[RMDB]
RNA sequence: GGGAACGACUCGAGUAGAGUCGAAAAGAAUUAUUUGAUUCCGUAAUUAAUCGCGGCAAUCACCUUGACAACAACAAGUCUACUUUGCGUUUACGUAAGCGCGCCCAAAACGGUGAAAACGAAACACCUAUUGAUAUACCGAAUAUCAAUAAUGAUGAUCCAACCAACAAUUCGUUGUUGGUUGGAUAAAAGAAACAACAACAACAAC
Reactivity to 2A3 in 0.01 (KOAc 150mM, MgCl2 10mM, bicine 150mM(pH8.5), 24C), signal-to-noise 4, nucleotides 027 to 156: g000a020a070u270u180a150u090u210u100g010a010u020u020c000c010g020u020a090a190u190u250a090a090u240c100g010c010g010g040c160a010a000u010c010a020c010c010u060u100g030a040c060a140a010c010a030a000c020a290a030g010u020c050u070a130c060u040u010u110g000c010g040u030u040u080a070c080g040u050a100a080g000c010g000c000g020c000c020c000a040a150a010a000c050g010g010u030g040a080a120a000a050c080g040a040a080a050c040a030c030c040u030a030u000u000g000a000u010a000u020a090c060c110g120a090a030u010a010u030c010a000a010u060a030a070u170g090a040u180g000
Reactivity to DMS in 0.01 (KOAc 150mM, MgCl2 10mM, bicine 150mM(pH8.5), 24C), signal-to-noise 2, nucleotides 027 to 156: g000a130a110u010u000a210u000u000u000g020a090u040u000c000c010g020u000a060a070u010u000a240a210u010c090g030c000g000g000c060a020a060u000c010a050c080c050u000u000g060a090c010a180a090c090a090a260c250a070a060g000u010c030u000a140c060u000u000u010g040c040g000u000u000u010a080c130g010u000a060a090g000c040g000c130g030c020c050c030a040a100a010a030c000g010g030u020g000a000a070a040a070c040g000a200a080a180c040a020c020c010u000a040u010u000g010a040u000a030u010a300c200c210g000a160a010u000a000u000c000a000a030u010a000a130u020g040a120u010g000
Description: Chemical mapping of a 207-nucleotide RNA with 2A3 and DMS. Values cover nucleotides 27 to 156. The RNA was probed in 150 mM KOAc, 10 mM MgCl2 and 150 mM bicine (pH 8.5) at 24 C. The 2A3 profile rests on 2,101 reads.